[RMDB]
RNA sequence: GGGAACGACUCGAGUAGAGUCGAAAAAGACACACCUUAACCCUAGCGGGGGUCGCUAGGGUGAAAUCACACCACGUGAUGGGAGUACGACCUGAUAGGGCGCUGCAGAGGCCCACUAUUAGGCUAGCUUCGGACUUGUUUUCGAACAAGUCCGAAGAAAAGAAACAACAACAACAAC
Reactivity to DMS in 0.01 (KOAc 150mM, MgCl2 10mM, bicine 150mM(pH8.5), 24C), signal-to-noise 2, nucleotides 027 to 126: a090g000a110c150a060c080a090c030c000u000u030a220a060c030c000c000u000a000g010c010g020g000g020g010g010u000c000g000c000u000a000g000g010g000u000g000a050a050a040u030c000a000c000a060c140c090a100c110g000u000g010a070u000g000g000g000a040g000u000a100c100g030a140c010c020u030g020a000u000a000g000g000g010c300g000c020u000g010c300a170g000a220g000g000c000c000c000a050c010u010a000u000u000a050g000g000c030u010a020g010
Reactivity to 2A3 in 0.01 (KOAc 150mM, MgCl2 10mM, bicine 150mM(pH8.5), 24C), signal-to-noise 3, nucleotides 027 to 126: a020g110a000c020a000c000a010c040c030u050u100a030a010c000c000c010u000a000g050c010g030g060g030g130g130u300c000g000c000u010a020g040g010g010u000g000a000a020a000u010c020a010c000a020c040c070a090c050g010u000g020a030u140g060g000g010a100g060u110a120c070g070a170c010c000u000g000a020u000a050g000g000g010c040g010c100u120g000c020a050g010a030g280g020c000c000c030a060c010u000a010u010u020a010g000g040c050u050a030g020